[RMDB]
RNA sequence: GGGAACGACUCGAGUAGAGUCGAAAACGUUAGUGAAAAUAUCCUUAAGGAAGUAAACGCAUCGGGAGCGAUAGCGGUGAAUUAUUCGUGGUUUUAUCGAUUCGGCAUAGUGGCGAUAACUGAAUGUUAUGAUACGCGGAUUCGUCCGCGUAUCAUAAAAAGAAACAACAACAACAAC
Reactivity to DMS in 0.01 (KOAc 150mM, MgCl2 10mM, bicine 150mM(pH8.5), 24C), signal-to-noise 1, nucleotides 027 to 126: c100g030u000u000a020g070u090g010a130a000a000a080u000a090u000c020c000u020u090a060a200g000g010a010a000g000u000a010a110a110c150g010c020a100u000c030g020g140g020a100g000c000g000a010u010a040g010c030g010g000u000g000a020a130u000u000a080u060u020c080g000u000g000g060u030u000u000u000a010u010c020g000a120u010u000c130g030g020c230a000u030a000g020u000g030g000c030g000a010u000a010a030c260u010g000a100a020u060g000u020
Reactivity to 2A3 in 0.01 (KOAc 150mM, MgCl2 10mM, bicine 150mM(pH8.5), 24C), signal-to-noise 2, nucleotides 027 to 126: c020g030u020u060a130g030u040g300a030a060a060a140u180a010u000c000c000u030u170a000a120g010g040a070a000g070u110a010a150a000c100g000c000a000u040c010g000g050g000a100g070c030g060a040u030a000g000c040g000g000u020g010a020a030u090u040a050u020u070c060g020u070g120g000u010u000u000u020a070u000c060g000a030u050u000c030g000g010c070a050u030a170g010u090g020g000c040g070a050u100a060a040c000u010g080a080a040u160g000u140
The data come from the RNA Mapping Database (RMDB), library RFM100. Structure probing data (DMS and 2A3) for a 177-nucleotide construct. For 2A3, 886 sequencing reads were counted. 2A3 adducts were read by reverse transcription with SuperScript II with manganese. Values cover nucleotides 27 to 126.